[RMDB]
RNA sequence: GGGAACGACUCGAGUAGAGUCGAAAAUUAUCCAGAAAAUGAAAUAGAUCGCCCACGCUAAGGAAACGAUCUAUUUCGUUUGUAAACCUUAUUAAGCCGACCGCCUAGUAGCGCGGCUAUUGCCAGACGUCAACUAUGUAUUCGUACAUAGUUGACGAAAAGAAACAACAACAACAAC
Reactivity to DMS in 0.01 (KOAc 150mM, MgCl2 10mM, bicine 150mM(pH8.5), 24C), signal-to-noise 8, nucleotides 027 to 126: u010u040a070u010c040c030a150g010a070a010a000a000u000g000a010a000a010u000a010g000a000u000c000g010c070c010c130a220c120g010c230u060a080a140g000g000a100a130a250c000g000a000u000c010u000a010u000u000u000c010g010u000u000u000g000u020a070a110a130c150c110u030u020a090u030u010a080a050g010c000c020g000a090c170c040g010c010c020u020a090g010u020a140g010c010g020c020g000g000c000u000a000u010u010g000c070c100a050g010a300
Reactivity to 2A3 in 0.01 (KOAc 150mM, MgCl2 10mM, bicine 150mM(pH8.5), 24C), signal-to-noise 7, nucleotides 027 to 126: u110u030a060u080c020c000a030g150a030a070a000a000u020g000a000a000a000u000a000g000a010u000c010g050c060c020c010a050c050g120c130u180a160a120g010g020a090a050a010c000g000a000u000c010u000a000u010u000u000c000g000u000u000u020g030u040a040a040a040c030c010u120u150a150u180u140a170a010g000c000c020g090a190c040c060g090c020c030u060a110g100u200a040g110c020g000c000g010g030c010u000a010u010u050g070c040c030a040g010a160
Background
An RNA of 177 nucleotides, treated with DMS and 2A3 and read out base by base. For 2A3 the reverse transcriptase was SuperScript II with manganese. The RNA was probed in 150 mM KOAc, 10 mM MgCl2 and 150 mM bicine (pH 8.5) at 24 C.